[RMDB]
RNA sequence: GGGAACGACUCGAGUAGAGUCGAAAACUGCGCGUGUGGCAGGAGGGUGGGUGAUGGUCCCGAUCUCUUGUAUUUAGAGAUGGGUUGUCCUGGGUUAGGAUGGUCGUGGAUACUCUGGGGGCGCGUGCGAUAUAUAUAAUUUCGAUUAUAUAUAUCGAAAAGAAACAACAACAACAAC
Reactivity to 2A3 in 0.01 (KOAc 150mM, MgCl2 10mM, bicine 150mM(pH8.5), 24C), signal-to-noise 6, nucleotides 027 to 126: c030u040g010c030g010c010g020u070g010u040g030g000c030a010g020g030a060g020g000g050u150g010g000g010u050g030a100u090g020g020u020c000c000c000g050a020u000c000u010c000u020u040g080u150a220u100u210u090a010g000a000g000a000u030g040g020g000u060u120g020u030c000c010u030g060g000g000u080u120a040g030g010a030u050g010g000u020c020g020u040g030g010a020u040a090c010u010c010u050g010g000g000g000g000c010g000c000g000u020g020
Reactivity to DMS in 0.01 (KOAc 150mM, MgCl2 10mM, bicine 150mM(pH8.5), 24C), signal-to-noise 5, nucleotides 027 to 126: c060u010g000c040g000c040g010u010g020u020g000g020c090a080g000g000a090g000g000g000u040g000g000g010u010g000a060u010g000g000u010c030c000c000g010a030u000c000u000c000u000u000g010u030a050u050u040u010a010g000a020g010a030u000g000g010g010u010u020g010u010c020c060u000g010g000g010u010u020a060g000g010a090u030g000g010u010c060g010u010g000g000a110u020a070c070u010c070u010g010g010g010g010g010c030g000c040g010u010g010